The record gives the reactivity of an RNA of 170 nucleotides to DMS and 2A3. Values cover nucleotides 27 to 129. The 2A3 profile rests on 46,327 reads. Values are in units of 0.01, from 0 to 300, in steps of 10. The RNA was probed in 150 mM KOAc, 10 mM MgCl2 and 150 mM bicine (pH 8.5) at 24 C. The data come from the RNA Mapping Database (RMDB), library 15KLIB. DMS adducts were read by reverse transcription with MarathonRT.
[RMDB]
RNA sequence: GGGAACGACUCGAGUAGAGUCGAAAAUUGAAGGUAAAACAGCCUGUGGGUGAAACACACCCACAGGGCCCUUUGGGCGCUAGCACUCUGGUAUCACGGUACCCUUGUGCGCCUGUUUUACCGAAGGUAAGUGGAGUGUUCGCACUCCACAAAAGAAACAACAACAACAAC
Reactivity to DMS in 0.01 (KOAc 150mM, MgCl2 10mM, bicine 150mM(pH8.5), 24C), signal-to-noise 6, nucleotides 027 to 129: u000u000g000a190a110g000g010u010a000a000a000a000c010a000g000c000c000u000g050u010g000g000g000u030g030a130a150a100c300a210c000a000c030c010c000a000c020a000g020g030g020c000c000c000u090u050u090g000g010g000c000g040c040u030a070g030c010a020c010u030c000u010g010g020u030a000u000c040a080c250g060g010u020a000c020c010c040u010u020g020u010g020c000g000c000c010u000g010u000u000u000u000a000c010c000g000a040a060g010g040u030a030a130
Reactivity to 2A3 in 0.01 (KOAc 150mM, MgCl2 10mM, bicine 150mM(pH8.5), 24C), signal-to-noise 7, nucleotides 027 to 129: u090u090g060a070a020g000g000u000a000a000a000a000c000a010g000c000c000u000g000u000g000g010g000u020g040a070a110a010c120a010c000a000c050c000c010a000c000a000g000g000g000c000c000c000u060u100u180g000g000g000c020g010c080u090a050g000c000a000c000u010c010u000g000g010u000a010u020c040a040c220g150g000u000a000c000c000c000u000u000g000u000g000c000g000c010c000u000g000u000u000u000u000a000c000c000g000a000a000g050g060u100a080a120